[RMDB]
RNA sequence: GGGAACGACUCGAGUAGAGUCGAAAAACUUCUUUUGCCAAUGGCGGGCCAUAUAAAACCUCAGUGGACUAAGCUGCAAAGCCGGUGGAUUACAAAGGCGGAGAGCUCUCAAAUCUUGUAUACUCGGCCAUUCGAAUCAUUUCGAUGAUUCGAAUGGAAAAGAAACAACAACAACAAC
Reactivity to 2A3 in 0.01 (KOAc 150mM, MgCl2 10mM, bicine 150mM(pH8.5), 24C), signal-to-noise 3, nucleotides 027 to 126: a000c040u130u080c030u050u110u060u170g030c020c000a030a030u060g030g000c000g010g030g000c010c000a030u070a030u050a110a070a010a060c000c020u050c050a090g060u120g050g030a010c010u040a040a020g000c020u030g050c040a060a030a010g020c010c000g000g030u020g010g050a030u010u030a110c050a030a140a010g010g000c000g020g020a050g000a000g010c010u000c000u000c040a080a220a150u010c050u030u070g020u040a050u000a100c020u030c040g020g000
Reactivity to DMS in 0.01 (KOAc 150mM, MgCl2 10mM, bicine 150mM(pH8.5), 24C), signal-to-noise 2, nucleotides 027 to 126: a080c120u040u040c020u000u000u000u020g040c040c050a130a180u010g010g030c110g000g010g000c050c040a030u040a030u050a080a090a110a040c030c030u000c020a040g020u000g000g000a050c020u000a080a080g000c010u020g010c100a050a090a110g050c070c020g010g000u000g000g000a120u010u030a020c070a000a150a200g000g010c040g020g000a050g000a080g000c090u000c040u000c040a090a040a060u000c080u010u010g000u030a030u000a050c080u000c040g010g000